The data come from the RNA Mapping Database (RMDB), library TTRDEL. Structure probing data (DMS and 2A3) for a 177-nucleotide construct. The reactions ran in a buffer of 150 mM KOAc, 10 mM MgCl2 and 150 mM bicine (pH 8.5), at 24 C.
[RMDB]
RNA sequence: GGGAACGACUCGAGUAGAGUCGAAAAGAUAUGGAAUGGAAUGGGAGCUGGUCGGAAACGAUUUCAGCGAAGAACAUUUAUUCCUAAGUCAAACCAUACCUAGCGUGUUCGCACGCUAGGUAUGGAAGAUUAGCUGUUAGUUCGCUAACAGCUAAUCAAAAGAAACAACAACAACAAC
Reactivity to DMS in 0.01 (KOAc 150mM, MgCl2 10mM, bicine 150mM(pH8.5), 24C), signal-to-noise 5, nucleotides 027 to 126: g000a050u010a300u010g000g000a000a000u000g020g030a010a010u000g000g010g010a140g020c010u000g010g010u000c010g010g000a120a080a230c010g010a010u000u010u010c010a000g060c000g000a060a100g010a130a160c010a010u000u000u000a030u020u010c000c000u000a050a130g010u010c030a080a130a240c000c000a000u000a000c010c000u000a000g010c010g030u000g000u000u020c210g020c000a010c000g000c000u000a000g000g010u000a000u000g000g000a010a030
Reactivity to 2A3 in 0.01 (KOAc 150mM, MgCl2 10mM, bicine 150mM(pH8.5), 24C), signal-to-noise 6, nucleotides 027 to 126: g020a000u090a030u180g010g020a030a020u030g080g070a020a020u010g010g030g010a040g000c000u010g020g000u000c000g020g020a080a050a040c010g010a000u060u300u300c010a000g000c040g060a140a040g020a030a000c000a000u020u020u020a010u010u010c010c000u020a150a040g050u040c060a090a030a070c000c000a000u010a000c000c010u000a000g000c010g000u020g080u120u090c300g020c150a000c000g000c000u010a000g010g000u000a000u000g000g000a000a000

Background
The 2A3 profile rests on 18,311 reads. The DMS profile rests on 7,360 reads.